[RMDB]
RNA sequence: GGGAACGACUCGAGUAGAGUCGAAAAGAGCUGAAGUUCGCUUCAGCUCAAAACAAAACUGUACACGCAGUACAGAAAAUCAAAAACAAAAAUGCGUAAAAAAAAGAUAGCAGUUCGCUGCUAUCAAGAACGAGUUAUACUUCGGUAUAACUCGUUCAAAAGAAACAACAACAACAAC
Reactivity to 2A3 in 0.01 (KOAc 150mM, MgCl2 10mM, bicine 150mM(pH8.5), 24C), signal-to-noise 1, nucleotides 027 to 126: g000a000g030c000u010g010a010a000g010u050u130c170g060c080u000u000c000a000g010c000u000c010a000a070a000a000c010a010a110a000a040c010u010g000u000a000c020a000c030g030c010a000g080u020a000c010a000g060a080a060a020a010u100c040a010a080a010a030a080c090a070a090a050a040a020u080g010c030g100u260a150a000a010a030a020a020a020a050g010a010u010a000g000c010a000g000u050u130c190g010c110u000g000c010u000a000u010c000a020a020
Source information
Chemical mapping of a 177-nucleotide RNA with 2A3. Values cover nucleotides 27 to 126. The RNA was probed in 150 mM KOAc, 10 mM MgCl2 and 150 mM bicine (pH 8.5) at 24 C.